The record gives the reactivity of an RNA of 177 nucleotides to DMS and 2A3. The reactions ran in a buffer of 150 mM KOAc, 10 mM MgCl2 and 150 mM bicine (pH 8.5), at 24 C. It was measured as part of the RMDB library OK2TST. For 2A3 the reverse transcriptase was SuperScript II with manganese. DMS adducts were read by reverse transcription with MarathonRT. The DMS profile rests on 9,007 reads.

RNA sequence: GGGAACGACUCGAGUAGAGUCGAAAAAUGGUAGUCAUCGUACGUACAUACGGGAUACCCGACUCUUCCACGCAGCGUCCAGGUCACUGCUCUUUUGGUUUGACAUCAUAGGAAGAGACAAGGCGUCUAUAUCAUAACCCUUCGGGGUUAUGAUAUAAAAAGAAACAACAACAACAAC
Reactivity to DMS in 0.01 (KOAc 150mM, MgCl2 10mM, bicine 150mM(pH8.5), 24C), signal-to-noise 6, nucleotides 027 to 126: a090u010g000g010u000a040g010u010c030a070u010c020g020u000a010c110g000u010a090c210a250u000a020c030g010g000g010a060u000a020c020c010c030g000a080c020u000c020u000u010c040c050a110c090g020c140a030g020c030g010u000c020c030a090g010g000u000c030a040c070u000g010c040u000c030u000u000u000u000g000g010u000u000u000g000a090c170a060u000c040a060u000a120g010g000a040a040g000a060g010a050c060a050a080g000g010c080g020u000c070
Reactivity to 2A3 in 0.01 (KOAc 150mM, MgCl2 10mM, bicine 150mM(pH8.5), 24C), signal-to-noise 4, nucleotides 027 to 126: a000u140g020g000u040a100g190u090c040a140u080c170g020u020a030c050g130u130a030c030a090u070a010c010g010g000g010a010u010a040c000c020c020g020a020c000u000c000u040u010c010c030a050c050g020c070a010g030c010g020u040c010c000a030g070g010u080c030a020c100u050g030c010u040c020u050u120u040u050g090g040u060u060u110g120a080c060a080u070c020a020u080a090g070g020a000a020g020a020g020a040c010a020a010g010g010c020g030u020c050